This 177-nucleotide RNA was probed chemically with 2A3 and DMS. For 2A3 the reverse transcriptase was SuperScript II with manganese. For DMS the reverse transcriptase was MarathonRT. The reactions ran in a buffer of 150 mM KOAc, 10 mM MgCl2 and 150 mM bicine (pH 8.5), at 24 C. It was measured as part of the RMDB library TTRDES.

RNA sequence: GGGAACGACUCGAGUAGAGUCGAAAAAAAAGAUAUGGACACAGGGAGGUCAUUACGGUGAUGACCCAAGUUCGGAAACGAACUUGGCAAGCCGUGGAUGACCGAAGAACUGUGUCCUAAGUCAAAACGAUAACUAUAUGUUCGCAUAUAGUUAUCGAAAAGAAACAACAACAACAAC
Reactivity to 2A3 in 0.01 (KOAc 150mM, MgCl2 10mM, bicine 150mM(pH8.5), 24C), signal-to-noise 3, nucleotides 027 to 126: a010a010a010a040g070a020u090a030u130g010g010a000c000a000c000a000g040g000g020a030g020g010u000c010a010u010u020a000c010g000g040u060g050a300u230g060a090c010c020c010a000a000g000u020u000c000g010g000a050a070a040c010g000a010a010c000u010u000g000g000c010a040a040g000c000c000g000u030g110g020a010u000g000a010c000c010g000a020a000g020a000a010c000u010g000u010g010u000c000c010u010a020a000g040u010c020a010a020a060a140
Reactivity to DMS in 0.01 (KOAc 150mM, MgCl2 10mM, bicine 150mM(pH8.5), 24C), signal-to-noise 8, nucleotides 027 to 126: a070a060a090a110g010a050u010a300u000g010g000a010c000a020c000a010g010g010g000a150g020g010u000c000a010u000u010a020c000g000g000u000g010a110u010g000a170c300c000c000a000a010g000u000u000c010g010g010a120a070a160c000g010a000a000c000u000u000g010g000c030a050a180g000c000c000g020u000g000g010a000u000g000a010c000c000g010a070a060g010a100a220c010u000g010u000g010u000c000c010u000a010a060g000u000c030a090a070a130a190